[RMDB]
This 177-nucleotide RNA was probed chemically with DMS and 2A3.
The DMS profile rests on 7,648 reads.
For DMS the reverse transcriptase was MarathonRT.
The reactions ran in a buffer of 150 mM KOAc, 10 mM MgCl2 and 150 mM bicine (pH 8.5), at 24 C.
RNA sequence: GGGAACGACUCGAGUAGAGUCGAAAAGAUAUGGAAUACUGUAGGGAGAACGUCGGAAACGACGUGUCGAGGAUCUACGUAUUCCUAAGUCAAAAGAGAAGAGUGACCUUCGGGUCACUCUUCUCAACAUGUGUAAUGGGUUCGCCCAUUACACAUGAAAAGAAACAACAACAACAAC
Reactivity to DMS in 0.01 (KOAc 150mM, MgCl2 10mM, bicine 150mM(pH8.5), 24C), signal-to-noise 5, nucleotides 027 to 126: g000a050u010a300u000g000g000a010a000u000a010c000u030g030u000a010g000g000g010a060g010a040a020c000g010u000c000g020g010a120a110a190c010g010a000c000g010u000g020u000c010g000a090g020g000a040u000c000u000a010c010g010u000a000u000u000c000c000u000a030a080g000u000c040a070a090a130a130g000a020g010a010a010g000a020g010u000g000a020c000c000u000u010c210g020g010g010u000c000a000c000u000c000u000u000c000u000c000a050a090
Reactivity to 2A3 in 0.01 (KOAc 150mM, MgCl2 10mM, bicine 150mM(pH8.5), 24C), signal-to-noise 2, nucleotides 027 to 126: g010a000u060a040u170g010g030a040a010u030a000c110u300g000u020a010g020g020g010a030g000a010a000c000g010u010c020g010g050a060a070a060c020g020a000c000g020u030g180u020c010g080a220g060g000a000u010c010u000a000c010g010u000a000u010u000c000c000u000a080a010g050u010c040a060a020a040a110g030a010g000a010a010g020a000g010u030g020a000c010c040u060u110c300g000g000g000u000c000a000c000u000c000u010u000c000u000c010a000a000